RNA sequence: GGGAACGACUCGAGUAGAGUCGAAAACUCUGGGUAUUUACAGAAAGAAUGGCUGAUGAGGUUGAGAAAAUCUCAACUGAAGGCAAUGAAGUGGACAAAGCUGACUCUUAUAUGCCUUAUAUGAGAGCAAGCAUUGAGCGUUCGCGCUCAAUGCUUGAAAAGAAACAACAACAACAAC
Reactivity to DMS in 0.01 (KOAc 150mM, MgCl2 10mM, bicine 150mM(pH8.5), 24C), signal-to-noise 2, nucleotides 027 to 126: c090u010c020u020g010g000g000u010a090u010u020u020a090c140a010g020a030a070a070g010a180a130u030g030g010c050u000g010a010u020g020a200g000g000u000u000g010a090g010a160a070a060a180u020c000u000c000a000a000c030u030g020a060a160g000g000c000a100a140u000g010a020a120g010u000g000g000a080c100a130a120a040g010c110u000g000a140c010u000c000u000u000a010u000a020u010g000c090c100u000u000a140u000a060u000g010a020g000a000g010
Reactivity to 2A3 in 0.01 (KOAc 150mM, MgCl2 10mM, bicine 150mM(pH8.5), 24C), signal-to-noise 2, nucleotides 027 to 126: c000u020c000u010g020g000g120u080a100u050u300u100a070c050a000g150a000a160a030g050a110a280u250g040g000c010u000g020a030u080g050a230g100g030u000u000g000a040g100a000a210a080a110u140c000u010c020a000a000c000u040g000a060a000g050g050c000a000a030u140g060a030a000g040u110g070g000a080c110a120a140a000g050c000u030g030a130c000u000c000u000u000a000u000a000u130g180c000c000u210u230a110u000a000u000g040a000g000a050g040